[RMDB]
Chemical mapping of a 207-nucleotide RNA with DMS and 2A3.
RNA sequence: GGGAACGACUCGAGUAGAGUCGAAAAGGGGUCCCACAAUGACGGCGAUACAGGCAACAGCUAUACUGAAGCCUCCACGGUAUAGACAUGCCUGGUCGCUAAGACAGUGGGACGGAGGCACCCAAAACUAUGUAUACACUUCGGUGUAUACAUAGAACUAUACGGAUCAGUUCGCUGAUCCGUAUAGAAAAGAAACAACAACAACAAC
Reactivity to DMS in 0.01 (KOAc 150mM, MgCl2 10mM, bicine 150mM(pH8.5), 24C), signal-to-noise 2, nucleotides 027 to 156: g010g040g040g040u000c010c020c010a010c000a090a130u000g030a080c140g020g000c000g010a060u000a150c020a020g000g030c000a110a180c110a120g020c020u000a030u000a010c000u000g000a060a180g010c020c000u000c000c010a300c030g000g040u000a030u000a000g020a080c060a170u000g030c000c000u000g000g010u010c010g020c000u010a020a080g010a160c110a190g000u000g020g000g030a020c000g020g010a020g110g090c000a180c000c000c020a020a070a100a250c010u000a010u000g000u000a010u000a000c000a010c010u000u000c300g090g000u010g050u010a050u000a020c010a000u000a010g000a080a180
Reactivity to 2A3 in 0.01 (KOAc 150mM, MgCl2 10mM, bicine 150mM(pH8.5), 24C), signal-to-noise 8, nucleotides 027 to 156: g040g010g060g030u000c000c080c010a010c010a020a220u300g090a070c150g010g030c020g010a020u280a300c110a010g010g000c050a130a080c050a300g010c010u010a000u000a000c000u020g040a160a010g010c000c000u000c000c000a010c000g000g010u000a000u000a000g120a150c110a170u170g000c000c000u010g000g000u000c000g000c000u010a020a020g080a010c040a000g000u000g000g000g000a000c010g000g000a000g010g000c000a030c000c000c000a030a080a040a040c000u000a000u000g000u020a000u020a000c000a000c020u080u130c300g070g000u000g000u000a000u010a000c000a000u000a000g000a000a000
For DMS, 4,143 sequencing reads were counted.
The 2A3 profile rests on 9,854 reads.
For DMS the reverse transcriptase was MarathonRT.